[RMDB]
RNA sequence: GGGAACGACUCGAGUAGAGUCGAAAAGCAUCGUCACCAACGUGGCCUCCCAGUGAGGCAAGACCGAAGUAAACUACACUCAGCUCGUCGACCUGCACGCCCGAUACGCUGAGUGUGGUUUGCGGAUCCUGGCCUUCCCGUGUAACCAGUUCGGGAACAAAAUAUACGCCUUCGGGCGUAUAUUUUGAAAAGAAACAACAACAACAAC
Reactivity to DMS in 0.01 (KOAc 150mM, MgCl2 10mM, bicine 150mM(pH8.5), 24C), signal-to-noise 1, nucleotides 027 to 156: g030c050a160u000c070g020u010c040a040c040c060a060a080c110g020u010g040g020c010c040u000c000c010c090a190g000u010g020a050g050g030c030a030a010g060a050c000c010g010a180a200g030u000a000a020a040c010u000a030c010a010c020u000c000a050g000c000u010c050g000u000c010g010a020c000c050u010g000c120a140c150g000c050c040c010g020a060u000a040c100g000c000u000g030a030g050u000g020u000g000g020u000u010u000g000c020g040g000a060u000c050c000u000g020g020c030c000u000u000c000c000c040g030u010g010u010a170a130c060c030a120g010u000u000c020g010g000g010a080a280
Reactivity to 2A3 in 0.01 (KOAc 150mM, MgCl2 10mM, bicine 150mM(pH8.5), 24C), signal-to-noise 2, nucleotides 027 to 156: g060c030a090u170c060g080u050c030a030c100c040a090a120c100g030u060g080g030c000c000u030c010c010c030a070g030u120g110a040g000g000c010a010a020g020a020c020c050g040a050a010g010u030a010a000a000c000u010a010c000a000c000u000c000a000g020c010u050c040g010u000c000g050a150c000c060u260g060c090a070c110g080c010c140c000g010a010u050a060c040g000c000u000g000a000g000u000g000u000g000g000u000u000u000g000c000g000g020a020u070c010c000u050g050g000c020c000u060u040c000c010c020g030u060g010u020a090a160c110c020a050g010u110u060c000g000g000g000a000a010

Overview:
An RNA of 207 nucleotides, treated with DMS and 2A3 and read out base by base. The 2A3 profile rests on 1,347 reads. For 2A3 the reverse transcriptase was SuperScript II with manganese. Values cover nucleotides 27 to 156. For DMS the reverse transcriptase was MarathonRT.